[RMDB]
RNA sequence: GGGAACGACUCGAGUAGAGUCGAAAAGAUAUGGAUAGCUUUGAUCAAGGAUCGCGAAGAACUCGGAAACGAGGGAGCGAAUCUUGGGAGCUAUCCUAAGUCAAAGUAUCUGCUUCGGCAGAUACAACCUCUACACAUGCUUCGGCAUGUGUAGAGGAAAAGAAACAACAACAACAAC
Reactivity to DMS in 0.01 (KOAc 150mM, MgCl2 10mM, bicine 150mM(pH8.5), 24C), signal-to-noise 1, nucleotides 027 to 126: g010a030u000a300u000g000g010a020u000a010g000c000u010u010u020g010a170u000c030a010a030g020g000a020u000c000g060c000g020a100a200g010a100a160c010u020c000g000g000a170a130a130c030g000a010g000g000g010a060g010c000g040a000a010u010c000u000u000g000g000g010a000g000c020u020a010u000c000c000u000a020a080g050u010c010a080a110a120g020u000a010u000c000u000g000c000u000u000c210g050g010c020a000g000a010u010a010c000a050a080
Reactivity to 2A3 in 0.01 (KOAc 150mM, MgCl2 10mM, bicine 150mM(pH8.5), 24C), signal-to-noise 2, nucleotides 027 to 126: g000a020u070a020u140g020g000a000u000a010g000c000u110u170u150g090a110u270c010a000a000g040g040a030u010c000g010c030g180a300a100g000a070a000c000u010c020g000g060a050a070a000c010g010a010g030g000g010a010g000c000g010a000a050u020c000u000u000g020g000g030a030g000c010u010a000u000c000c000u000a070a000g050u020c050a190a060a000g010u010a010u000c000u000g000c000u030u090c270g140g000c010a000g000a000u000a000c000a010a010
Chemical mapping of a 177-nucleotide RNA with DMS and 2A3.